This 177-nucleotide RNA was probed chemically with DMS and 2A3.
[RMDB]
RNA sequence: GGGAACGACUCGAGUAGAGUCGAAAACUGGCUGCUGUUUCCUUAGUGCGUUGAACAACCGGCUCAGAACUGGAGCGGACAAGGGGAAUCCGACUGUUUAAUUAAAACAAAGCAUUGUGAUGGCCGGCAAUGGAAUUUGGUUCGCCAAAUUCCAUUGAAAAGAAACAACAACAACAAC
Reactivity to DMS in 0.01 (KOAc 150mM, MgCl2 10mM, bicine 150mM(pH8.5), 24C), signal-to-noise 2, nucleotides 027 to 126: c050u000g030g040c030u000g030c080u000g040u010u010u000c040c040u000u020a100g020u000g010c060g030u000u010g000a090a070c090a070a180c020c000g000g010c020u000c100a100g010a180a050c050u010g020g000a100g020c020g000g010a020c070a050a070g000g010g000g010a160a210u000c030c040g000a100c030u000g000u000u000u010a080a130u030u000a030a040a070a080c100a060a060a120g000c040a060u000u000g020u000g000a160u000g010g000c000c020g000g010
Reactivity to 2A3 in 0.01 (KOAc 150mM, MgCl2 10mM, bicine 150mM(pH8.5), 24C), signal-to-noise 2, nucleotides 027 to 126: c010u010g030g010c010u010g020c010u030g050u070u040u070c020c000u010u020a050g010u050g110c040g060u050u060g030a110a000c000a050a070c020c000g020g000c040u050c210a020g020a040a010c020u080g040g050a030g040c000g020g020a040c040a140a170g030g000g000g030a020a030u000c000c030g050a040c060u040g040u040u030u110a180a170u180u140a080a030a010a000c050a010a110a010g020c030a030u000u170g010u010g040a020u010g040g000c020c000g000g000